This 177-nucleotide RNA was probed chemically with 2A3 and DMS. Conditions: 150 mM KOAc, 10 mM MgCl2 and 150 mM bicine (pH 8.5), 24 C. DMS (dimethyl sulfate) methylates the pairing face of unpaired adenines and cytosines. 2A3 adducts were read by reverse transcription with SuperScript II with manganese. Values are in units of 0.01, from 0 to 300, in steps of 10. For DMS the reverse transcriptase was MarathonRT.

RNA sequence: GGGAACGACUCGAGUAGAGUCGAAAAAGGGGACUCCAUCUGCGAGGGCAUAUCGUCCUCGCUUUUCUGUACCGUAAGGUGGUACAGGAAUAAGGGCUGGGCAAGACCGGUGCCAGCCGCCGCGGUAGCCCCUUUUCUAAUUCGUUAGAAAAGGGGCAAAAGAAACAACAACAACAAC
Reactivity to 2A3 in 0.01 (KOAc 150mM, MgCl2 10mM, bicine 150mM(pH8.5), 24C), signal-to-noise 4, nucleotides 027 to 126: a000g060g000g000g010a040c030u020c020c010a090u030c050u090g000c010g000a010g010g030g000c010a060u220a110u280c100g010u000c000c000u020c000g010c000u010u000u000u000c010u000g010u000a000c010c000g080u110a110a040g120g120u190g020g010u040a000c000a000g030g030a000a020u110a030a050g050g010g000c040u070g020g010g040c050a080a020g040a050c040c020g040g010u030g090c010c000a000g020c000c010g010c010c030g040c020g050g040u060a040
Reactivity to DMS in 0.01 (KOAc 150mM, MgCl2 10mM, bicine 150mM(pH8.5), 24C), signal-to-noise 5, nucleotides 027 to 126: a070g010g010g010g020a110c040u000c040c040a090u020c100u010g000c000g000a020g000g010g010c010a130u050a100u020c170g010u000c000c010u000c000g010c010u010u010u000u000c000u000g000u000a000c000c000g020u020a100a130g030g070u050g010g020u010a000c000a010g010g000a000a030u050a100a060g010g000g010c010u010g000g000g010c090a070a060g000a150c100c040g000g030u000g000c040c010a040g000c010c000g000c080c060g020c060g000g010u020a170